[RMDB]
RNA sequence: GGGAACGACUCGAGUAGAGUCGAAAAUUGGAUUUAAUAACUGUAGUUGCCAAAGGUGAGGUGUAAAUUUAUUCUAAGCAAAGGAGGAUGCUCAUUUUUGAAAAUUCACUUGUCCAUAAGAUUAAUGAAUUCAUACAGACUUCGGUCUGUAUGAAUUAAAAGAAACAACAACAACAAC
Reactivity to DMS in 0.01 (KOAc 150mM, MgCl2 10mM, bicine 150mM(pH8.5), 24C), signal-to-noise 2, nucleotides 027 to 126: u000u000g000g000a130u000u000u000a070a070u000a100a100c060u020g020u010a100g010u000u010g000c210c020a010a040a050g030g010u000g000a060g010g010u010g000u010a080a060a070u000u010u010a100u040u000c040u010a040a110g020c100a040a070a100g010g010a060g010g000a060u000g000c090u010c040a040u000u000u000u000u000g000a060a080a080a050u000u000c020a070c080u000u000g010u000c010c020a090u000a070a090g000a100u030u000a060a100u010g000
Source: RMDB library OK2TRN, as collected in RNAgym.
Chemical mapping of a 177-nucleotide RNA with DMS.
The RNA was probed in 150 mM KOAc, 10 mM MgCl2 and 150 mM bicine (pH 8.5) at 24 C.
The DMS profile rests on 1,270 reads.